[RMDB]
Notes
Chemical mapping of a 177-nucleotide RNA with 2A3. For 2A3 the reverse transcriptase was SuperScript II with manganese. Values are in units of 0.01, from 0 to 300, in steps of 10. The data come from the RNA Mapping Database (RMDB), libraries RFM100 and RFMREP. The RNA was probed in 150 mM KOAc, 10 mM MgCl2 and 150 mM bicine (pH 8.5) at 24 C.
RNA sequence: GGGAACGACUCGAGUAGAGUCGAAAACCCAAACAAAAAACAGGGUUUCUGAUAACCGGUGCGACAAUAUGCCCUUCCAAGGCACUGACCGGCACGGAGAAAAACUAUAAUGCCAUGUCGUAUAACGCACAUCGCAUGACUUCGGUCAUGCGAUGUGAAAAGAAACAACAACAACAAC
Reactivity to 2A3 in 0.01 (KOAc 150mM, MgCl2 10mM, bicine 150mM(pH8.5), 24C), signal-to-noise 1, nucleotides 027 to 126: c000c000c030a010a150a000c020a000a010a000a000a000a000c090a120g090g030g060u030u030u010c000u140g030a080u030a180a030c080c000g000g010u000g010c000g020a020c030a070a010u020a080u060g000c010c000c000u300u010c010c030a040a110g000g000c000a090c170u030g110a040c060c000g010g020c010a000c020g070g000a050g020a030a040a010a000a030c010u070a090u080a300a010u070g000c000c000a000u050g010u030c000g030u020a040u030a080a000c040g000